[RMDB]
RNA sequence: GGGAACGACUCGAGUAGAGUCGAAAACUUAUAUAGCCUUCAUUCAUGGUGGCAGUAAAAUGUUUAUUGUGUUUGAAUGUGUUUAUGUAAGAGGAGCCGUACCUGUUGGUAUGUCUCAUUAUAAUGACAUAUGGCUUUAGUUCGCUAAAGCCAUAUGAAAAGAAACAACAACAACAAC
Reactivity to DMS in 0.01 (KOAc 150mM, MgCl2 10mM, bicine 150mM(pH8.5), 24C), signal-to-noise 5, nucleotides 027 to 126: c000u000u000a000u000a010u000a010g000c010c010u000u000c000a000u000u000c000a010u000g010g020u000g000g000c000a020g000u000a080a090a140a140u000g010u000u000u010a010u000u000g030u000g000u000u000u000g000a010a010u000g010u020g020u000u010u000a010u000g010u000a010a010g010a190g000g000a020g010c050c000g020u000a010c000c000u000g020u010u010g030g020u000a010u000g000u000c000u000c000a070u010u000a090u010a090a120u000g010a290
Reactivity to 2A3 in 0.01 (KOAc 150mM, MgCl2 10mM, bicine 150mM(pH8.5), 24C), signal-to-noise 3, nucleotides 027 to 126: c000u030u000a000u000a000u000a010g000c000c000u010u010c010a010u020u000c000a000u020g010g000u000g020g000c000a000g020u030a000a050a030a040u030g040u040u170u260a010u030u020g020u000g010u010u010u020g020a000a010u050g110u000g030u130u290u060a010u000g010u000a010a010g070a090g160g000a000g000c000c010g010u010a000c010c000u150g180u300u300g070g000u010a000u000g010u010c000u010c020a010u050u130a100u040a080a150u120g050a010